[RMDB]
RNA sequence: GGGAACGACUCGAGUAGAGUCGAAAAGUGCCUCGUCUGCCCGGCAUGCCAACCUGAUCCGAAGUUCAAGGUGGUUUCUCUGGCCUUCCAGAGAGAUGCGCGUCGGAAGAACCGACGAACAAACCUUAAAACAAAACGACGUUCGCGUCGUUUUGAACCCAGUAUGUUCCUUCGGGAACAUACUGGGAAAAGAAACAACAACAACAAC
Reactivity to 2A3 in 0.01 (KOAc 150mM, MgCl2 10mM, bicine 150mM(pH8.5), 24C), signal-to-noise 1, nucleotides 027 to 156: g020u040g040c000c000u060c010g060u050c000u030g090c000c010c000g000g000c040a020u060g000c000c000a050a050c000c010u020g010a010u020c020c080g100a060a030g050u050u080c040a030a010g000g020u000g020g000u040u030u000c040u120c000u000g020g060c070c040u300u140c050c020a000g000a000g000a000g000a040u160g110c020g000c020g020u010c000g000g000a150a020g010a120a050c020c010g000a000c000g030a080a030c060a050a120a040c020c040u160u240a040a070a000a080c030a000a000a000a000c000g000a000c000g010u040u090c220g040c040g100u040c000g010u000u000u000u000g000a000a020

Structure probing data (2A3) for a 207-nucleotide construct. The data come from the RNA Mapping Database (RMDB), library M2RFPK. Reactivities are given for positions 27 through 156.